The record gives the reactivity of an RNA of 207 nucleotides to DMS and 2A3. The DMS profile rests on 3,019 reads. The reactions ran in a buffer of 150 mM KOAc, 10 mM MgCl2 and 150 mM bicine (pH 8.5), at 24 C. For 2A3 the reverse transcriptase was SuperScript II with manganese.
[RMDB]
RNA sequence: GGGAACGACUCGAGUAGAGUCGAAAAAGUUAGAGCGCUUGAAGCUAACGGUAUAGAACCAAACAACUUCCGUGUUUCUAAGAUUUUGGCGACUAUACAGAAGGAAUCAGGCGGUGAUCCUAACGCACAAAAUAACUGGGAUAUUAACGCUCUAAGACUGUAGGUAGAAGUUCGCUUCUACCUACAGAAAAGAAACAACAACAACAAC
Reactivity to DMS in 0.01 (KOAc 150mM, MgCl2 10mM, bicine 150mM(pH8.5), 24C), signal-to-noise 2, nucleotides 027 to 156: a090g000u010u000a060g010a050g010c000g050c030u000u000g010a110a080g020c030u010a030a300c090g000g030u010a070u010a070g000a300a070c020c000a000a070a060c040a060a070c000u000u000c020c080g030u000g000u000u000u000c020u030a000a060g010a190u000u000u000u000g020g010c010g000a160c000u000a070u000a110c010a070g000a130a130g000g000a090a050u020c000a070g020g000c050g020g010u020g000a050u000c020c010u000a060a090c070g040c050a300c040a060a020a070a140u010a080a090c020u000g020g000g020a110u000a140u000u000a030a070c070g000c010u000c000u000a030a050g000a230
Reactivity to 2A3 in 0.01 (KOAc 150mM, MgCl2 10mM, bicine 150mM(pH8.5), 24C), signal-to-noise 4, nucleotides 027 to 156: a000g010u010u010a010g000a000g010c010g010c060u040u070g080a120a020g030c060u050a070a010c040g040g010u010a090u020a050g050a040a030c020c000a040a010a040c030a040a060c060u120u080c050c060g080u050g020u110u080u010c070u060a070a060g000a150u010u010u040u040g010g000c040g060a140c020u020a030u020a070c050a050g160a100a030g110g010a060a110u090c040a050g130g090c080g000g080u050g020a020u010c000c000u020a080a060c020g030c050a070c060a100a060a010a060u090a050a010c050u040g020g000g000a010u020a020u140u110a080a050c040g000c020u000c010u020a000a020g030a050